RNA sequence: GGGAACGACUCGAGUAGAGUCGAAAACUCCAGCUGAAUCGAAGCGAGUAUCGAUUCAGAGAUCUGACUUGAUGCUUUCGCCAAGCACACCUCAAUAGUGUGUUAGCUGGCACAUAAAGUUAUGCACGAUGAUGAGUUCUUUCGAGAAUUCGUCAUCAAAAGAAACAACAACAACAAC
Reactivity to 2A3 in 0.01 (KOAc 150mM, MgCl2 10mM, bicine 150mM(pH8.5), 24C), signal-to-noise 9, nucleotides 027 to 126: c020u000c000c000a030g010c000u010g010a010a020u020c020g010a060a010g160c080g090a050g110u100a080u050c000g000a000u000u000c000a000g010a010g010a070u030c040u040g020a020c000u020u040g030a030u030g070c020u050u120u140c030g000c010c010a030a010g010c000a000c000a000c000c020u160c070a110a130u090a200g020u030g000u000g000u020u010a020g000c010u010g000g030c010a000c000a030u170a030a080a010g030u060u060a090u240g110c100a040c160
Reactivity to DMS in 0.01 (KOAc 150mM, MgCl2 10mM, bicine 150mM(pH8.5), 24C), signal-to-noise 9, nucleotides 027 to 126: c090u010c010c030a160g000c010u000g000a020a020u000c020g000a050a120g010c170g010a170g040u040a060u000c000g000a010u000u000c000a010g000a100g000a110u010c080u010g000a020c020u000u000g010a060u000g000c080u000u010u030c170g020c010c040a010a090g000c010a010c000a010c000c050u010c300a120a110u040a180g000u000g000u010g000u000u010a140g010c030u000g000g000c060a090c070a060u020a100a030a020g000u010u010a040u020g010c190a130c170